Structure probing data (2A3 and DMS) for a 177-nucleotide construct. 2A3 adducts were read by reverse transcription with SuperScript II with manganese. Conditions: 150 mM KOAc, 10 mM MgCl2 and 150 mM bicine (pH 8.5), 24 C.
RNA sequence: GGGAACGACUCGAGUAGAGUCGAAAAGCAGGCAUGUGCUUUAUGCAGAGCAAGACGGCGUCCACUGCAUAUUGGACAAGUGUAAACCGUUUUACACAUCGUCGCAGAAAACGGUUUCUGAAUGCCAAUCUACGCUUCAUUUCGAUGAAGCGUAGAUAAAAGAAACAACAACAACAAC
Reactivity to 2A3 in 0.01 (KOAc 150mM, MgCl2 10mM, bicine 150mM(pH8.5), 24C), signal-to-noise 4, nucleotides 027 to 126: g080c050a020g020g000c000a010u030g010u030g070c000u000u000u000a020u020g000c000a000g030a010g050c030a030a040g040a030c020g100g070c000g030u010c030c020a030c010u000g000c000a010u010a020u020u040g010g010a020c010a020a010g040u020g050u100a000a000a010c020c010g010u010u000u000u040a070c080a010c010a040u110c090g130u030c080g010c050a020g120a010a030a000a000c010g030g000u000u000u010c030u060g100a070a020u020g010c000c000a010
Reactivity to DMS in 0.01 (KOAc 150mM, MgCl2 10mM, bicine 150mM(pH8.5), 24C), signal-to-noise 3, nucleotides 027 to 126: g010c070a120g000g020c010a060u010g000u000g000c000u000u010u000a020u000g000c020a010g000a120g020c100a110a080g030a040c080g000g010c000g000u010c030c050a220c030u010g010c020a010u000a020u000u020g000g000a030c010a070a000g010u010g000u040a010a020a010c040c050g000u000u000u000u000a090c150a080c130a120u000c100g010u030c060g000c090a150g000a020a010a000a030c040g000g010u010u000u000c020u000g000a120a060u010g010c020c000a180